Structure probing data (DMS and 2A3) for a 207-nucleotide construct. For DMS, 3,166 sequencing reads were counted. Conditions: 150 mM KOAc, 10 mM MgCl2 and 150 mM bicine (pH 8.5), 24 C. The 2A3 profile rests on 2,031 reads.
[RMDB]
RNA sequence: GGGAACGACUCGAGUAGAGUCGAAAACUUCAGCUUCCUAGAGGACUGAGACUCUGAAGCUCUAGAGUCCUAGGACUUCCUGACUCUUCCUCUGAAGUCCUAGUCAGCUCUAGCUAGAGGAAGAGUCUCCUAGGAGAUCCUCUGAAGCUAGUCUCAGCAACGAGGGUAUAUUCGUAUACCCUCGUUGAAAAGAAACAACAACAACAAC
Reactivity to DMS in 0.01 (KOAc 150mM, MgCl2 10mM, bicine 150mM(pH8.5), 24C), signal-to-noise 2, nucleotides 027 to 156: c030u000u000c000a050g000c020u000u000c020c040u010a100g010a090g030g000a240c030u030g010a070g010a050c010u000c040u000g000a160a280g010c030u000c040u010a020g020a100g020u010c300c000u000a000g010g010a080c070u000u020c060c050u010g010a070c010u000c090u000u000c060c000u000c050u000g000a070a070g010u010c110c010u010a030g030u000c060a170g000c050u000c010u000a030g040c050u010a040g000a070g020g000a140a030g000a070g010u000c000u000c010c020u000a050g030g020a090g030a050u010c090c000u020c030u000g000a100a040g020c020u010a000g000u010c010u010c050a160g000
Reactivity to 2A3 in 0.01 (KOAc 150mM, MgCl2 10mM, bicine 150mM(pH8.5), 24C), signal-to-noise 3, nucleotides 027 to 156: c020u140u090c050a030g030c020u040u010c010c060u070a030g010a030g030g030a020c010u080g000a020g010a010c000u020c040u130g110a120a020g030c010u010c030u070a010g000a020g040u010c000c000u000a000g000g020a030c030u170u070c080c100u080g030a030c020u020c020u180u060c010c010u080c020u040g070a060a000g020u040c020c010u030a010g030u090c070a060g030c030u010c000u060a000g010c000u040a030g010a000g050g000a010a020g000a010g000u010c000u000c000c000u040a040g030g010a040g020a040u020c010c010u000c000u010g020a010a000g000c000u010a020g010u000c000u000c010a040g000